This 177-nucleotide RNA was probed chemically with DMS and 2A3. It was measured as part of the RMDB library OK2TST. Conditions: 150 mM KOAc, 10 mM MgCl2 and 150 mM bicine (pH 8.5), 24 C.
RNA sequence: GGGAACGACUCGAGUAGAGUCGAAAAUAUCGAAGGUUAAGCGUUGCAGGACUUGAAGGUUUGGGAAGGCUGCUACGCCUCCUCACAAAUUACUUUAAGGUCGAGAUAGGAAGAAAAUUACUAGAUAGUAAUGCGUAAUAUUCGUAUUACGCAUUACAAAAGAAACAACAACAACAAC
Reactivity to DMS in 0.01 (KOAc 150mM, MgCl2 10mM, bicine 150mM(pH8.5), 24C), signal-to-noise 7, nucleotides 027 to 126: u010a080u010c070g010a110a090g010g010u000u000a080a100g020c090g020u000u000g020c070a080g000g010a080c040u010u000g010a070a040g010g000u000u000u000g010g000g010a040a020g010g010c020u000g020c190u010a060c230g010c010c010u000c020c020u000c050a080c160a030a050a050u000u000a110c040u000u010u000a060a030g000g010u000c050g010a080g010a100u010a050g010g000a050a090g010a040a050a070a060u010u000a090c070u000a080g010a100u000a100
Reactivity to 2A3 in 0.01 (KOAc 150mM, MgCl2 10mM, bicine 150mM(pH8.5), 24C), signal-to-noise 4, nucleotides 027 to 126: u180a040u070c030g020a060a020g080g010u080u080a050a020g000c070g060u060u070g000c050a020g030g080a060c000u020u050g050a080a030g030g020u040u100u110g030g000g030a030a020g030g000c010u090g070c030u100a030c070g000c000c000u020c020c000u010c010a040c030a030a100a060u120u110a070c020u000u050u120a050a000g070g000u020c010g010a010g020a080u050a040g060g050a050a030g040a040a130a020a020u080u060a050c040u020a030g100a190u090a070

DMS adducts were read by reverse transcription with MarathonRT.